[RMDB]
RNA sequence: GGGAACGACUCGAGUAGAGUCGAAAAAUAUGUCAGUGGUUCCUGUAAGAAGAUCUAGGACAUAGGGAGGGUGGGUGAGAGCGCGAAUGUCAGAGAUCACGCGCGCGAGAAGAUAUGGGAACCACAACACUUAUUUAUUGUUCGCAGUGAGUAGGUGAAAAGAAACAACAACAACAAC
Reactivity to 2A3 in 0.01 (KOAc 150mM, MgCl2 10mM, bicine 150mM(pH8.5), 24C), signal-to-noise 3, nucleotides 027 to 126: a000u080a040u070g070u020c040a010g020u000g000g000u010u000c000c000u010g020u010a030a030g100a080a000g010a030u000c010u010a000g020g000a010c020a070u040a000g000g010g030a120g040g030g180u230g010g010g000u040g020a040g000a010g000c010g000c000g000a040a030u070g010u020c030a000g020a000g010a090u050c010a010c020g020c000g000c000g000c010g000a030g000a050a020g010a010u040a040u030g010g000g000a000a000c000c000a000c000a000a000
Reactivity to DMS in 0.01 (KOAc 150mM, MgCl2 10mM, bicine 150mM(pH8.5), 24C), signal-to-noise 9, nucleotides 027 to 126: a050u010a020u010g000u010c150a210g020u000g000g010u000u000c000c010u000g000u010a040a100g010a130a080g000a080u010c020u000a220g000g000a130c170a110u020a110g000g010g010a130g000g000g000u040g000g010g000u010g000a020g000a060g010c010g020c010g000a040a050u010g010u000c140a170g010a150g000a080u020c100a070c280g010c010g000c010g010c050g010a090g010a080a070g000a100u000a020u000g000g000g000a050a030c020c010a000c020a040a070
Record summary:
The record gives the reactivity of an RNA of 177 nucleotides to 2A3 and DMS. The data come from the RNA Mapping Database (RMDB), library OK1LIB. DMS adducts were read by reverse transcription with MarathonRT. The RNA was probed in 150 mM KOAc, 10 mM MgCl2 and 150 mM bicine (pH 8.5) at 24 C. Values cover nucleotides 27 to 126.